[RMDB]
RNA sequence: GGGAACGACUCGAGUAGAGUCGAAAACUACAGGCGCACACCACUCCACCAGGCUAAUUUUCGUAUUUUUUGUAGAGACAGGGUAUCACCACGUUGGCCAGGCUGGUCUUGAACUCCUGAGCUCAAGAUCAGGCUGAAGUUUCGACUUCAGCCUGAUAAAAGAAACAACAACAACAAC
Reactivity to 2A3 in 0.01 (KOAc 150mM, MgCl2 10mM, bicine 150mM(pH8.5), 24C), signal-to-noise 1, nucleotides 027 to 126: c000u040a020c030a030g110g010c030g020c030a040c000a010c010c020a030c010u000c010c000a030c030c000a030g040g000c050u070a040a070u030u100u040u070c040g050u060a150u040u070u060u000u050u110g120u120a070g010a000g010a030c020a030g020g010g050u020a120u120c010a000c010c000a010c020g030u020u050g090g000c060c000a010g060g030c040u030g010g070u000c010u030u080g010a030a000c010u030c030c030u040g010a020g010c050u000c040a010a030g010
Reactivity to DMS in 0.01 (KOAc 150mM, MgCl2 10mM, bicine 150mM(pH8.5), 24C), signal-to-noise 3, nucleotides 027 to 126: c030u000a080c090a080g020g020c060g000c060a020c060a090c060c020a060c090u000c070c040a080c060c030a090g000g010c060u010a030a060u010u000u000u010c120g020u020a010u000u000u000u020u010u010g000u010a110g000a080g020a070c070a030g010g000g010u000a100u000c030a080c030c020a060c080g010u010u000g000g000c010c040a030g000g000c060u010g020g030u010c010u000u000g010a020a090c050u010c030c050u010g010a090g020c050u000c040a020a080g000